[RMDB]
Chemical mapping of a 170-nucleotide RNA with DMS and 2A3.
High DMS reactivity at an A or C suggests that its Watson-Crick edge is free.
The DMS profile rests on 19,806 reads.
Reactivities are given for positions 27 through 129.

RNA sequence: GGGAACGACUCGAGUAGAGUCGAAAAACAGGCAAGCAACAAGAUAGAGGAGCCCCCAUGACGCUGGAACCGUCCCGGAAGUGGGAGAAAGGGAGGCGAAGAUAGAAGGGGAGACCCCGAUCAGAAUAACGAUGACUCUUCGGAGUCAUCAAAAGAAACAACAACAACAAC
Reactivity to DMS in 0.01 (KOAc 150mM, MgCl2 10mM, bicine 150mM(pH8.5), 24C), signal-to-noise 5, nucleotides 027 to 129: a070c090a090g000g000c060a010a010g030c140a060a090c090a020a020g010a020u030a090g010a100g030g020a100g030c000c030c020c040c060a080u050g020a080c090g040c070u000g030g010a030a030c140c080g010u000c030c050c030g000g000a050a050g040u070g000g000g000a080g030a010a010a030g030g000g000a040g030g030c050g020a040a030g010a110u050a050g010a090a080g000g000g000g000a090g010a070c040c020c020c020g010a090u050c090a070g000a110a120u090a040a040c080
Reactivity to 2A3 in 0.01 (KOAc 150mM, MgCl2 10mM, bicine 150mM(pH8.5), 24C), signal-to-noise 5, nucleotides 027 to 129: a020c040a010g060g030c040a020a040g030c000a000a100c020a070a050g050a100u140a030g040a080g030g010a020g010c000c000c000c020c000a040u080g010a000c040g010c060u030g000g000a030a090c010c010g040u040c000c000c000g010g050a110a030g050u180g050g030g010a040g050a040a040a020g000g020g000a020g000g000c020g010a000a000g030a000u130a010g070a080a010g010g010g010g010a030g010a020c000c010c010c000g010a030u050c030a010g120a150a040u190a100a050c110